Structure probing data (2A3 and DMS) for a 177-nucleotide construct.
DMS adducts were read by reverse transcription with MarathonRT.
The 2A3 profile rests on 1,762 reads.
Reactivities are given for positions 27 through 126.
Source: RMDB library OK1LIB, as collected in RNAgym.
DMS (dimethyl sulfate) methylates the pairing face of unpaired adenines and cytosines.
Conditions: 150 mM KOAc, 10 mM MgCl2 and 150 mM bicine (pH 8.5), 24 C.
2A3 adducts were read by reverse transcription with SuperScript II with manganese.
High 2A3 reactivity points to a flexible backbone, as in loops and unpaired stretches.
RNA sequence: GGGAACGACUCGAGUAGAGUCGAAAAUUGGGAAAGAAGGAUUGUACAAUACAUAUAUUGGAGAUGUUUGGCAUCCCCAUACUGAUAGUGGCUCUGAAAUUAAGGGAUUUUUAUGCCAGAAAACAAGACCGCUCUAUGAUUUCGAUCAUAGAGCGGUAAAAGAAACAACAACAACAAC
Reactivity to 2A3 in 0.01 (KOAc 150mM, MgCl2 10mM, bicine 150mM(pH8.5), 24C), signal-to-noise 1, nucleotides 027 to 126: u110u020g080g010g020a000a110a030g070a010a070g050g000a020u000u110g050u020a050c040a060a060u080a110c040a020u220a020u040a060u060u150g050g020a080g060a130u040g080u060u110u120g080g010c000a010u030c030c030c010c000a020u050a120c030u030g110a070u030a060g110u050g040g000c050u010c090u110g100a030a040a050u080u060a050a110g090g000g000a050u020u090u000u010u040a040u170g020c010c000a030g050a010a040a000a010c060a020a030g050
Reactivity to DMS in 0.01 (KOAc 150mM, MgCl2 10mM, bicine 150mM(pH8.5), 24C), signal-to-noise 2, nucleotides 027 to 126: u010u010g000g000g000a050a050a040g000a080a040g030g030a080u000u010g020u030a090c100a050a040u000a040c200a020u000a070u010a040u040u040g000g010a070g020a020u000g000u000u040u020g000g030c010a010u010c020c000c010c040a010u020a010c050u040g000a070u010a100g010u000g000g010c020u000c070u040g000a060a050a090u040u010a080a070g000g000g000a070u000u000u020u010u000a070u040g020c000c020a080g000a040a060a110a150c070a050a100g000